The record gives the reactivity of an RNA of 177 nucleotides to 2A3 and DMS. Values are in units of 0.01, from 0 to 300, in steps of 10. For 2A3 the reverse transcriptase was SuperScript II with manganese.
RNA sequence: GGGAACGACUCGAGUAGAGUCGAAAAGAUAUGGAUGUUUCUACCCACCCUACACAGCCAAUGAUGAACCUAGAUUCGGAAACGAAUCUAGGUUUUGAGGCUGGGUAGGAGGAAACAUCCUAAGUCACUGUAUUGAUGAGUUCGCUCAUCAAUACAGAAAAGAAACAACAACAACAAC
Reactivity to 2A3 in 0.01 (KOAc 150mM, MgCl2 10mM, bicine 150mM(pH8.5), 24C), signal-to-noise 1, nucleotides 027 to 126: g050a060u100a070u200g010g000a000u000g010u030u020u030c030u130a300c000c120c010a040c020c000c000u000a000c040a000c000a010g000c000c060a170a190u300g180a070u200g000a130a020c000c000u000a000g000a000u000u000c010g040g010a040a080a050c000g010a000a000u000c000u000a000g010g000u000u000u000u000g000a000g000g000c020u010g000g000g000u010a000g000g000a000g000g000a000a000a000c000a000u000c020c000u000a030a010g100u050c050a010
Reactivity to DMS in 0.01 (KOAc 150mM, MgCl2 10mM, bicine 150mM(pH8.5), 24C), signal-to-noise 3, nucleotides 027 to 126: g030a050u010a130u010g010g010a030u000g000u000u000u020c000u000a140c010c040c100a300c090c010c000u000a010c000a020c010a010g000c010c030a080a120u000g020a150u000g000a000a010c000c000u000a000g000a000u000u000c000g020g000a050a060a100c000g010a040a000u000c000u000a010g000g010u000u000u000u000g010a290g010g010c000u000g000g000g000u000a010g000g010a040g010g000a020a020a000c010a020u000c000c000u000a020a060g010u000c080a150
The 2A3 profile rests on 4,211 reads.